The record gives the reactivity of an RNA of 177 nucleotides to 2A3 and DMS. 2A3 adducts were read by reverse transcription with SuperScript II with manganese.
[RMDB]
RNA sequence: GGGAACGACUCGAGUAGAGUCGAAAAACGUACGGAUCAUACACUAGCCAUGGUACCAUGCAUGCUAGCGUACUCAUGGAUCCACAUGCAUGCGAUCCUAGAUCUGCUAGUGAUCCGGUACAUGAUCCGGUUUGCUGAAUUUCGAUUCAGCAAACCGAAAAGAAACAACAACAACAAC
Reactivity to 2A3 in 0.01 (KOAc 150mM, MgCl2 10mM, bicine 150mM(pH8.5), 24C), signal-to-noise 3, nucleotides 027 to 126: a000c090g000u010a010c000g000g010a020u020c020a090u090a170c090a030c070u010a000g000c030c010a060u060g010g000u050a110c000c040a020u050g000c000a000u010g000c050u120a130g000c040g130u120a070c050u000c140a170u220g080g030a070u050c020c020a000c000a000u030g000c000a010u000g010c060g050a070u110c000c000u020a070g020a210u080c070u130g000c010u000a030g010u010g040a020u020c000c000g020g020u040a010c010a010u110g030a040u090c040
Reactivity to DMS in 0.01 (KOAc 150mM, MgCl2 10mM, bicine 150mM(pH8.5), 24C), signal-to-noise 3, nucleotides 027 to 126: a030c140g010u000a070c010g010g000a000u000c010a150u010a200c150a080c020u000a020g010c010c050a190u000g010g010u000a290c300c010a030u010g010c020a020u000g010c080u000a070g030c070g000u000a020c070u000c210a200u010g010g000a030u000c060c080a160c030a030u000g010c060a060u000g000c060g010a130u000c010c040u000a080g010a090u020c180u010g010c010u000a040g020u010g000a040u000c020c000g000g010u000a000c050a090u000g000a060u000c050

DMS (dimethyl sulfate) methylates the pairing face of unpaired adenines and cytosines. Reactivities are rounded to 0.1 and cut off at 0 and 3. The DMS profile rests on 1,741 reads. The 2A3 profile rests on 2,696 reads. The reactions ran in a buffer of 150 mM KOAc, 10 mM MgCl2 and 150 mM bicine (pH 8.5), at 24 C.